The record gives the reactivity of an RNA of 177 nucleotides to 2A3 and DMS. Conditions: 150 mM KOAc, 10 mM MgCl2 and 150 mM bicine (pH 8.5), 24 C.
RNA sequence: GGGAACGACUCGAGUAGAGUCGAAAAGUACUAGCGUUCGCGCUAGUACAAAGAAAGAAAGUUAGUCUGAGCGCACAGACUAGCGCAAAAGAAAGAAAGAAAAAAUCCCACUCUUCGGAGUGGGAAACCUUAUGGUAUGGUUCGCCAUACCAUAAGGAAAAGAAACAACAACAACAAC
Reactivity to 2A3 in 0.01 (KOAc 150mM, MgCl2 10mM, bicine 150mM(pH8.5), 24C), signal-to-noise 2, nucleotides 027 to 126: g000u000a010c010u000a020g000c000g020u030u020c180g000c000g010c090u000a000g000u000a010c000a010a000a000g050a010a090a020g080a040a090a000g000u010u000a010g000u020c000u010g020a020g140c090g000c090a030c010a060g010a010c000u000a010g000c040g010c030a110a020a090a010g110a050a100a010g120a050a140a060g230a060a110a020a010a020a000u020c020c000c000a020c010u010c000u000u090c270g040g000a000g000u000g020g050g000a010a000a000
Reactivity to DMS in 0.01 (KOAc 150mM, MgCl2 10mM, bicine 150mM(pH8.5), 24C), signal-to-noise 4, nucleotides 027 to 126: g010u000a000c000u000a000g020c000g010u010u020c180g020c030g030c000u000a000g000u000a000c000a050a120a110g010a110a060a090g000a100a130a130g010u000u000a020g000u000c020u010g000a110g000c120g010c160a110c000a020g010a010c010u000a020g010c010g020c140a060a070a090a050g000a080a090a100g000a040a090a120g030a020a040a070a090a110a130u000c000c000c000a020c000u000c000u000u010c240g020g000a010g030u000g000g000g010a000a000a030